An RNA of 177 nucleotides, treated with 2A3 and DMS and read out base by base. 2A3 adducts were read by reverse transcription with SuperScript II with manganese. In probing experiments dimethyl sulfate is read out at A N1 and C N3, which are open when not base-paired.

RNA sequence: GGGAACGACUCGAGUAGAGUCGAAAACCCUGUCUCCUCGGUUCUUCUUCGAUCCGGACCGGCUCAUCUCGGCAAAGGGCGGCAGUCCUCAGUGCUCUUACUCUUUCCUAUAAAGAGGAGACUGCUGGAAUAUACUUUGCUUCGGCAAAGUAUAUUCAAAAGAAACAACAACAACAAC
Reactivity to 2A3 in 0.01 (KOAc 150mM, MgCl2 10mM, bicine 150mM(pH8.5), 24C), signal-to-noise 1, nucleotides 027 to 126: c010c000c000u010g000u010c020u000c000c010u050c040g050g060u070u000c030u100u030c000u080u050c060g050a060u040c060c010g000g080a070c010c000g040g020c030u010c030a140u040c040u030c050g040g000c020a060a110a090g020g010g020c010g010g050c020a010g040u040c010c000u030c010a020g050u030g050c010u000c000u090u080a260c010u060c000u060u050u040c000c010u110a140u060a300a070a010g020a000g020g000a010g010a020c020u010g000c000u060g060
Reactivity to DMS in 0.01 (KOAc 150mM, MgCl2 10mM, bicine 150mM(pH8.5), 24C), signal-to-noise 1, nucleotides 027 to 126: c050c040c000u000g010u010c020u010c000c010u000c020g020g000u000u000c040u010u000c090u010u010c120g000a110u010c030c060g030g000a120c060c050g010g020c010u020c100a040u020c070u000c070g000g040c060a070a090a120g000g000g020c020g030g000c090a070g000u000c020c000u000c020a050g020u010g000c190u010c010u000u000a160c030u000c020u000u000u000c090c080u010a110u020a060a020a060g000a020g000g020a030g000a030c030u000g010c070u000g000